[RMDB]
RNA sequence: GGGAACGACUCGAGUAGAGUCGAAAAGUGUAGCGUCACUUUGAUGGCGGUACUAUGAAUUGAUGCAAGGUGUGGAGCGACCUUAAACAGUUCUGGUGGUGCUCGGAAUGGAGUGCUCUACUGAGAUUUAACUUAUGCACGUUCGCGUGCAUAAGAAGGAGAGGUGCAAGUUCGCUUGCACCUCUCCAAAAGAAACAACAACAACAAC
Reactivity to 2A3 in 0.01 (KOAc 150mM, MgCl2 10mM, bicine 150mM(pH8.5), 24C), signal-to-noise 1, nucleotides 027 to 156: g030u030g030u030a060g130c000g000u000c030a020c060u080u130u300g250a300u030g080g050c070g110g140u020a020c060u130a000u100g030a000a060u030u300g140a030u130g100c220a110a020g080g000u100g100u250g020g000a000g000c000g000a000c000c000u050u120a120a090a030c030a110g000u000u020c000u030g020g020u000g000g000u000g000c000u000c060g000g150a050a000u220g160g000a000g030u020g000c000u140c160u130a030c000u140g130a060g100a250u000u000u300a000a020c000u000u000a000u000g080c000a000c000g000u010u010c250g080c000g100u000g020c000a000u000a000a000g000a120a000

Chemical mapping of a 207-nucleotide RNA with 2A3.
It was measured as part of the RMDB library M2RFPK.